[RMDB]
RNA sequence: GGGAACGACUCGAGUAGAGUCGAAAAAUGCUGUAAUUCUCCGGCAAUCAGCUGCCAGUUGCGGCGAUGUUGCUCGGGAUGCCCUUCCAUCGAUUUAAACAGUUCGUUGCGCAUCAGUACGCUGGAGCACUUCCCUUAUUUUCGAAUAAGGGAAGUGAAAAGAAACAACAACAACAAC
Reactivity to DMS in 0.01 (KOAc 150mM, MgCl2 10mM, bicine 150mM(pH8.5), 24C), signal-to-noise 9, nucleotides 027 to 126: a070u010g020c020u000g000u000a090a130u000u010c020u000c010c030g010g010c020a130a100u010c080a150g010c010u000g010c020c090a160g010u000u010g020c040g010g010c020g010a070u010g010u000u000g010c180u010c140g020g000g000a050u000g010c070c090c040u000u000c030c020a080u000c040g000a090u000u010u000a100a070a090c090a050g000u000u010c040g010u000u000g010c040g020c050a070u000c070a080g000u000a080c170g010c010u000g000g000a070g000
Reactivity to 2A3 in 0.01 (KOAc 150mM, MgCl2 10mM, bicine 150mM(pH8.5), 24C), signal-to-noise 6, nucleotides 027 to 126: a000u060g000c010u020g010u100a100a100u140u030c040u000c020c000g000g000c020a020a080u080c020a060g020c010u030g040c020c040a140g050u180u190g080c040g020g000c020g000a040u060g030u070u110g020c050u040c040g020g000g000a010u070g020c020c000c000u050u040c030c010a130u120c050g080a040u030u070u270a100a130a040c030a030g080u090u070c030g040u100u140g030c040g000c020a060u030c020a060g070u040a030c070g000c010u010g030g000a020g010

An RNA of 177 nucleotides, treated with DMS and 2A3 and read out base by base. It was measured as part of the RMDB library OK2TST. The reactions ran in a buffer of 150 mM KOAc, 10 mM MgCl2 and 150 mM bicine (pH 8.5), at 24 C. Reactivities are given for positions 27 through 126.